[RMDB]
RNA sequence: GGGAACGACUCGAGUAGAGUCGAAAAGCUCUGUAAUGGGAUGGGAUCCGAAGCCCCAUUGAGGGAUAAUACAGGCUCUCCCAUCCAACUCCUAUUCCAACACGUCAUCGUCGUACAGAGUGGUAACUAAGGUAUAGCUCCUUCGGGAGCUAUACAACAACGUGAGUAUCUUCGGAUACUCACGUUGAAAAGAAACAACAACAACAAC
Reactivity to DMS in 0.01 (KOAc 150mM, MgCl2 10mM, bicine 150mM(pH8.5), 24C), signal-to-noise 2, nucleotides 027 to 156: g020c000u000c020u000g030u000a030a090u040g030g020g000a060u010g010g000g010a030u010c020c000g000a100a180g010c030c000c010c000a300u000u000g010a200g020g020g010a120u000a060a140u010a150c140a230g010g030c040u000c070u000c000c000c000a080u000c010c020a070a060c050u000c070c040u000a160u010u000c000c090a080a100c050a070c030g000u010c080a060u000c040g020u000c040g000u000a020c000a020g000a030g030u010g050g000u020a080a130c060u030a120a140g010g000u020a020u000a010g010c000u000c000c000u000u000c300g030g000g010a000g010c020u000a000u010a000c010a070a040
Reactivity to 2A3 in 0.01 (KOAc 150mM, MgCl2 10mM, bicine 150mM(pH8.5), 24C), signal-to-noise 2, nucleotides 027 to 156: g000c000u000c000u010g030u050a120a130u150g080g000g030a000u000g000g000g020a010u120c000c000g060a080a030g020c020c010c040c010a160u110u180g060a260g070g000g010a040u070a110a030u170a150c090a040g000g000c000u000c000u000c000c000c000a000u030c000c000a000a000c030u020c030c030u060a140u020u120c070c010a080a020c050a080c090g170u150c050a080u120c080g110u030c000g000u020a000c010a010g010a050g020u020g000g020u110a130a070c120u040a020a160g050g000u000a010u000a000g000c000u000c000c000u050u090c180g090g000g000a010g030c000u000a000u000a000c000a000a000
The record gives the reactivity of an RNA of 207 nucleotides to DMS and 2A3. The 2A3 profile rests on 857 reads. The data come from the RNA Mapping Database (RMDB), library M2RFPK. DMS adducts were read by reverse transcription with MarathonRT. For 2A3 the reverse transcriptase was SuperScript II with manganese. The reactions ran in a buffer of 150 mM KOAc, 10 mM MgCl2 and 150 mM bicine (pH 8.5), at 24 C.